[RMDB]
RNA sequence: GGGAACGACUCGAGUAGAGUCGAAAAGCUUAAGGCUUCCAAACUUACCUUAAUUUGGUAAGAAAAUAAGCUGCCCUAUUUUUCUUUCUUCUUCUCUUACAACUGGAACCAGCCAUUUCCCCAAACUCUCAAGAACGCAUUUCGAUGCGUUCUUGAGAAAAGAAACAACAACAACAAC
Reactivity to 2A3 in 0.01 (KOAc 150mM, MgCl2 10mM, bicine 150mM(pH8.5), 24C), signal-to-noise 2, nucleotides 027 to 126: g010c010u050u070a050a040g090g010c030u130u000c000c050a100a030a020c000u000u000a000c000c000u100u170a160a130u290u220u080g010g000u000a000a000g010a020a060a000a000u070a030a010g020c020u010g010c000c020c010u050a100u010u040u020u000u000c040u000u020u000c000u030u010c000u000u010c030u000c000u030u080a090c060a110a060c070u070g040g010a040a040c010c010a010g040c010c030a030u000u000u040c000c000c000c000a010a080a040c020u020

An RNA of 177 nucleotides, treated with 2A3 and read out base by base. High 2A3 reactivity points to a flexible backbone, as in loops and unpaired stretches. Reactivities are given for positions 27 through 126.